[RMDB]
RNA sequence: GGGAACGACUCGAGUAGAGUCGAAAAGAAUUUCCCCAUAACGCCGGUGAAACUCUUGGAAGCGGAAGAAGGAAGGCGGAGAAAAGGAGCGGGCCCUCCGAUCCGAGGGGCCCGACGCCCCUGAUCUAAGGCCCUAACUUCGGUUAGGGCAAAAGAAACAACAACAACAAC
Reactivity to 2A3 in 0.01 (KOAc 150mM, MgCl2 10mM, bicine 150mM(pH8.5), 24C), signal-to-noise 5, nucleotides 027 to 129: g100a020a100u040u010u020c020c010c000c000a060u150a190a020c030g040c050c010g000g000u060g030a110a030a010c030u040c010u080u090g030g020a060a040g080c040g030g020a000a000g010a000a000g010g030a020a010g000g000c020g000g000a010g010a000a070a000a010g040g010a060g040c030g000g000g020c010c000c000u050c020c000g040a060u070c010c030g020a060g000g000g010g000c000c020c010g010a010c000g010c000c000c000c000u010g020a030u020c010u040a050a030g070
Reactivity to DMS in 0.01 (KOAc 150mM, MgCl2 10mM, bicine 150mM(pH8.5), 24C), signal-to-noise 6, nucleotides 027 to 129: g040a090a120u000u010u030c000c000c000c010a040u000a130a090c180g030c070c030g040g000u010g020a110a040a010c070u020c030u040u010g000g000a050a000g040c120g010g000a070a040g030a060a020g060g020a040a030g070g000c070g000g050a050g000a030a040a080a090g040g020a070g000c090g020g000g030c000c000c000u000c050c040g030a100u050c030c100g030a060g010g010g010g000c020c110c040g000a030c110g030c040c040c010c030u000g000a070u010c060u000a060a070g000

Chemical mapping of a 170-nucleotide RNA with 2A3 and DMS.
Conditions: 150 mM KOAc, 10 mM MgCl2 and 150 mM bicine (pH 8.5), 24 C.
The 2A3 profile rests on 15,408 reads.